[RMDB]
RNA sequence: GGGAACGACUCGAGUAGAGUCGAAAAGUUCGGGCCUUCGGGCCCGAACAAAUAAUCCAGCCUGGAAAGGCUGGAGCCAAAACUAUGGAAAAGGCACCAUAGAAACCACAUGGUUCGCCAUGUGGAACAGAUGAACAAACUUCGGUUUGUUCAUCUGAAAAGAAACAACAACAACAAC
Reactivity to DMS in 0.01 (KOAc 150mM, MgCl2 10mM, bicine 150mM(pH8.5), 24C), signal-to-noise 1, nucleotides 027 to 126: g000u000u000c000g000g000g040c000c020u000u000c150g030g040g040c000c000c000g000a000a010c020a050a060a100u020a150a110u000c000c010a010g020c000c010u000g020g030a150a150a010g000g000c000u000g010g010a010g020c050c030a080a090a140a210c030u000a020u010g000g000a030a100a140a080g020g000c110a190c000c000a000u010a000g000a200a070a090c010c000a000c000a030u000g000g010u010u000c250g000c030c000a000u010g000u000g000g000a070a110